[RMDB]
RNA sequence: GGGAACGACUCGAGUAGAGUCGAAAAAGACGCACAAGCUGCCUGAGAUCGCCCAUAUGCAACUCCGCGCGGGCGCGCGGCCUGACGGUGGCCACCAUCGGGGAAGUCGAGGUAUUCGUCGACCACGCGGUAGCAGAGAUUUCGAUCUCUGCUACCGAAAAGAAACAACAACAACAAC
Reactivity to 2A3 in 0.01 (KOAc 150mM, MgCl2 10mM, bicine 150mM(pH8.5), 24C), signal-to-noise 1, nucleotides 027 to 126: a000g030a000c030g090c010a030c020a080a100g030c030u040g010c070c020u030g030a020g010a150u060c020g040c020c020c000a110u110a050u160g000c010a040a110c060u010c040c010g010c010g040c130g030g110g020c070g000c030g000c010g050g070c020c010u030g000a040c030g000g050u030g060g050c000c050a070c020c010a070u070c000g000g000g000g000a080a000g030u050c020g020a050g030g000u080a150u080u130c040g040u000c010g040a030c000c030a050c050g060
Reactivity to DMS in 0.01 (KOAc 150mM, MgCl2 10mM, bicine 150mM(pH8.5), 24C), signal-to-noise 2, nucleotides 027 to 126: a110g000a030c080g030c120a060c160a100a130g000c040u000g010c000c040u020g000a090g000a120u000c100g030c030c030c010a120u000a050u010g010c080a090a120c120u010c010c010g040c020g000c030g020g000g020c050g000c070g050c050g020g000c040c010u020g030a080c130g000g010u000g010g000c090c030a100c050c040a040u000c050g000g000g020g050a070a060g010u010c020g010a060g000g020u000a160u010u000c010g020u000c030g000a120c060c040a080c090g000